RNA sequence: GGGAACGACUCGAGUAGAGUCGAAAAGAUAUGGAUUGGGCAUGGGAGAGGAGUAUCGGAAACGAUACUUCUCAUCGAUCAUGCCAAUCCUAAGUCAAACCAUAUACAGCUUCGGCUGUAUAUGGAAGUAUUAGAUAGGGUUCGCCCUAUCUAAUACAAAAGAAACAACAACAACAAC
Reactivity to 2A3 in 0.01 (KOAc 150mM, MgCl2 10mM, bicine 150mM(pH8.5), 24C), signal-to-noise 6, nucleotides 027 to 126: g000a000u020a010u060g010g010a010u010u040g250g180g050c000a000u010g040g170g150a230g010a000g040g010a000g000u000a000u000c000g010g000a000a010a000c000g000a000u000a000c000u000u000c010u000c000a000u040c050g020a110u020c000a000u000g000c000c000a010a000u000c000c000u000a010a000g010u010c030a120a030a050c000c000a010u000a000u000a010c000a000g010c060u050u280c300g280g000c000u010g000u000a000u000a000u000g000g000a020a060
Reactivity to DMS in 0.01 (KOAc 150mM, MgCl2 10mM, bicine 150mM(pH8.5), 24C), signal-to-noise 6, nucleotides 027 to 126: g010a000u000a060u020g000g010a020u000u000g020g010g020c000a010u000g010g020g010a270g010a010g010g000a010g010u000a000u000c000g020g000a020a010a040c000g010a010u000a000c000u000u000c000u000c000a070u000c300g000a170u000c000a010u000g000c000c000a010a000u000c000c000u000a000a090g000u000c010a180a130a230c000c000a000u000a000u000a000c000a010g010c010u000u020c280g030g010c000u000g010u000a000u000a000u000g000g000a020a060

The record gives the reactivity of an RNA of 177 nucleotides to 2A3 and DMS. Conditions: 150 mM KOAc, 10 mM MgCl2 and 150 mM bicine (pH 8.5), 24 C. DMS adducts were read by reverse transcription with MarathonRT. The data come from the RNA Mapping Database (RMDB), library TTRDES. The 2A3 profile rests on 30,923 reads.